RNA sequence: GGGAACGACUCGAGUAGAGUCGAAAACGGAACCAUCGUCCCAGGGAUCCUGGGCAUCGCCCUGAUCUGGGGCGGCAUCGACGCAGGUGCUGCUAACAACAUCGGCUUGAUCGUCUCUGGUGCGCUCAACAUCCUUGGUGCCGGUGCACCGGCCACAGUACUACCAGUGAUUCGUCACUGGUAGUACAAAAGAAACAACAACAACAAC
Reactivity to 2A3 in 0.01 (KOAc 150mM, MgCl2 10mM, bicine 150mM(pH8.5), 24C), signal-to-noise 7, nucleotides 027 to 156: c020g010g010a030a030c050c000a030u050c000g020u020c010c000c010a010g020g020g010a030u060c040c090u080g010g010g000c020a110u120c070g010c010c010c010u090g090a280u130c140u190g010g000g000g010c000g000g000c000a010u030c030g050a050c060g020c070a030g000g040u060g030c030u030g020c030u100a080a060c060a040a030c010a120u120c030g060g010c030u030u040g040a080u150c030g040u000c040u020c060u150g010g020u030g010c040g000c010u030c010a020a110c010a110u050c020c020u040u050g050g020u090g010c010c000g000g020u050g000c060a080c050c000g030g020c030c010a080c020a030
Reactivity to DMS in 0.01 (KOAc 150mM, MgCl2 10mM, bicine 150mM(pH8.5), 24C), signal-to-noise 1, nucleotides 027 to 156: c010g010g010a130a120c080c020a020u010c060g000u000c020c000c020a060g000g010g000a100u000c080c060u000g010g010g030c060a050u010c070g030c000c010c020u010g000a150u000c090u010g020g060g020g010c000g010g000c100a100u010c030g010a080c080g070c050a060g010g020u000g000c030u000g000c060u000a080a150c040a060a010c020a020u000c010g000g020c040u010u000g010a100u000c060g020u000c010u000c040u010g010g000u000g000c040g040c000u000c020a050a030c060a080u000c030c020u010u040g010g030u000g000c020c070g030g010u000g000c010a180c020c020g000g010c000c030a020c080a290
Source: RMDB library OK3TST, as collected in RNAgym. Structure probing data (2A3 and DMS) for a 207-nucleotide construct. The reactions ran in a buffer of 150 mM KOAc, 10 mM MgCl2 and 150 mM bicine (pH 8.5), at 24 C. In probing experiments dimethyl sulfate is read out at A N1 and C N3, which are open when not base-paired. For 2A3 the reverse transcriptase was SuperScript II with manganese.